This 177-nucleotide RNA was probed chemically with 2A3 and DMS. For 2A3, 3,211 sequencing reads were counted. For 2A3 the reverse transcriptase was SuperScript II with manganese. The reactions ran in a buffer of 150 mM KOAc, 10 mM MgCl2 and 150 mM bicine (pH 8.5), at 24 C. Source: RMDB library OK1LIB, as collected in RNAgym.
RNA sequence: GGGAACGACUCGAGUAGAGUCGAAAAGAGCUAAUAUCUACUUCGUUUGUGCAUAUCACUAUAGGGAAGCUGAUGGGUUGCGAGAACGUUCAAGCAUCGCAGUGCCUAGUGGAAUGAACGGCUCGAAGGGUAAAGAAAACUUCGGUUUUCUUUACCCAAAAGAAACAACAACAACAAC
Reactivity to 2A3 in 0.01 (KOAc 150mM, MgCl2 10mM, bicine 150mM(pH8.5), 24C), signal-to-noise 5, nucleotides 027 to 126: g060a000g010c030u060a030a020u050a150u180c050u070a080c020u040u040c050g120u020u070u160g020u040g030c050a020u070a060u260c020a020c040u120a060u170a130g070g020g030a070a040g040c070u040g020a130u060g010g100g020u030u020g030c000g000a040g020a090a020c030g060u160u100c070a040a010g020c000a000u010c010g000c050a030g010u090g110c000c010u030a050g060u020g040g030a030a020u070g020a060a010c010g020g000c000u000c000g010a080a060
Reactivity to DMS in 0.01 (KOAc 150mM, MgCl2 10mM, bicine 150mM(pH8.5), 24C), signal-to-noise 4, nucleotides 027 to 126: g000a070g010c030u010a070a100u030a050u010c020u010a090c050u000u020c120g020u000u000u010g000u010g030c080a080u020a060u020c050a030c030u010a110u020a110g020g000g040a070a080g000c030u000g010a060u020g000g000g010u010u010g010c030g000a140g000a080a090c100g010u000u000c100a050a130g000c030a060u020c050g010c100a060g000u000g000c030c050u000a050g010u020g000g020a070a080u000g010a090a040c040g000g000c010u010c010g000a100a130